Structure probing data (2A3 and DMS) for a 177-nucleotide construct. For DMS the reverse transcriptase was MarathonRT. 2A3 is a SHAPE reagent: it acylates the 2'-hydroxyl of flexible nucleotides of all four kinds. Conditions: 150 mM KOAc, 10 mM MgCl2 and 150 mM bicine (pH 8.5), 24 C.
RNA sequence: GGGAACGACUCGAGUAGAGUCGAAAAGACGAUCUCGUCACCAUCUUCUCCAUGAAGAAAGGAGACAUCCUGGGCGUCUUCACCACGCUUUCCGGAGCGUGGGUGAUCGUGCGUUGUGACAGGGAAGGCUGGACGUUAUGUUCGCAUAACGUCCAGCAAAAGAAACAACAACAACAAC
Reactivity to 2A3 in 0.01 (KOAc 150mM, MgCl2 10mM, bicine 150mM(pH8.5), 24C), signal-to-noise 1, nucleotides 027 to 126: g050a010c040g070a240u080c080u050c100g000u010c020a020c050c000a070u070c060u120u010c000u000c060c030a190u300g070a000a090g070a080a100a020g030g010a010g050a030c020a030u040c030c010u020g000g100g020c020g000u050c010u060u010c060a010c010c000a000c010g020c000u200u070u030c130c250g240g030a000g000c000g000u010g140g010g040u030g000a030u090c060g030u110g050c090g020u040u030g100u110g000a010c000a070g000g010g030a120a030g130
Reactivity to DMS in 0.01 (KOAc 150mM, MgCl2 10mM, bicine 150mM(pH8.5), 24C), signal-to-noise 2, nucleotides 027 to 126: g010a030c050g030a160u010c050u000c040g000u010c010a130c030c050a230u000c000u000u000c000u040c300c200a090u010g010a030a080g000a020a110a080g030g000a010g030a110c180a070u000c010c000u000g000g000g020c070g030u000c040u000u000c010a050c010c000a000c000g000c000u000u000u010c290c140g020g010a000g000c000g020u010g000g000g030u000g020a020u000c250g010u000g010c020g000u000u000g000u000g000a180c030a100g030g000g000a110a050g010